An RNA of 207 nucleotides, treated with 2A3 and read out base by base.
[RMDB]
RNA sequence: GGGAACGACUCGAGUAGAGUCGAAAACUGGUUGAAAUGGCUUCUCCUGGGCGAUCGCUCGCUGUUUUUGUGGCUGGCUUUCAGCGGGCUGGAGGAGCCGGGAGCGGAGGCGGAGGACCGAGCCAAAGAUGCUAUGUUCACUUCGGUGAACAUAGAACAAACUUUAGCUGUUCGCAGCUAAAGUUUGAAAAGAAACAACAACAACAAC
Reactivity to 2A3 in 0.01 (KOAc 150mM, MgCl2 10mM, bicine 150mM(pH8.5), 24C), signal-to-noise 1, nucleotides 027 to 156: c010u010g000g120u060u120g060a040a100a140u200g010g000c000u030u000c010u020c030c010u020g060g110g000c070g100a110u090c070g000c000u000c020g000c030u020g040u000u040u030u130u030g070u010g040g000c060u020g020g030c000u000u040u020c010a010g000c000g010g030g020c030u030g020g010a000g000g020a000g000c000c000g000g010g000a010g000c030g030g030a000g020g040c080g010g010a040g020g020a010c030c080g050a030g000c000c010a050a080a000g040a010u120g040c000u000a000u000g000u010u000c000a000c010u000u050c210g060g000u010g010a000a000c000a000u000a000g010a000a000
Reactivities are rounded to 0.1 and cut off at 0 and 3.
The reactions ran in a buffer of 150 mM KOAc, 10 mM MgCl2 and 150 mM bicine (pH 8.5), at 24 C.
For 2A3, 815 sequencing reads were counted.